[RMDB]
RNA sequence: GGGAACGACUCGAGUAGAGUCGAAAACAUCCUUUUAAUAAGUUUGGCAAAGCUCGUGUCUAUUAUGAGAGCAUGUCUUACCAGGAGCAAGAUGAACUUUUUGCCAUGACAAAGCGUAACGUCAUUCGCGGAUAGAAAGGUUCGCCUUUCUAUCCGCAAAAGAAACAACAACAACAAC
Reactivity to 2A3 in 0.01 (KOAc 150mM, MgCl2 10mM, bicine 150mM(pH8.5), 24C), signal-to-noise 1, nucleotides 027 to 126: c010a040u100c010c000u040u050u140u120a140a110u160a120a030g000u020u090u020g020g030c010a040a010a000g000c010u000c050g060u120g070u050c050u110a150u240u070a000u260g130a060g000a010g050c000a010u020g000u000c020u000u050a020c020c060a070g010g100a090g070c060a060a000g060a020u050g040a070a210c050u020u000u000u210u070g000c040c010a050u090g010a000c060a040a050a000g090c120g050u000a040a000c000g020u040c010a060u050u030c070